RNA sequence: GGGAACGACUCGAGUAGAGUCGAAAAUGUAAUGUGGUUGUACACUUAUAGCAUUGGAGAAGCCUCAAGCCCCAUUGCCUAUCUGGUUUUUGUCACUACACUCACUAGUGAUUAUACGAUUACAGUCCUGUAUCCCUUUGUUCGCAAAGGGAUACAGAAAAGAAACAACAACAACAAC
Reactivity to DMS in 0.01 (KOAc 150mM, MgCl2 10mM, bicine 150mM(pH8.5), 24C), signal-to-noise 1, nucleotides 027 to 126: u010g000u010a080a020u000g020u010g070g000u020u010g050u000a120c120a070c040u000u000a060u000a070g000c020a090u000u000g000g000a110g010a070a150g010c040c050u010c110a120a290g040c040c030c000c010a010u000u000g030c100c030u000a040u010c040u000g000g010u020u000u010u000u000g000u000c010a000c040u000a000c140a050c190u000c090a030c180u000a010g010u000g010a000u000u000a070u000a070c060g010a020u000u000a040c070a060g010u010c120
Conditions: 150 mM KOAc, 10 mM MgCl2 and 150 mM bicine (pH 8.5), 24 C. Chemical mapping of a 177-nucleotide RNA with DMS. For DMS the reverse transcriptase was MarathonRT. The DMS profile rests on 872 reads.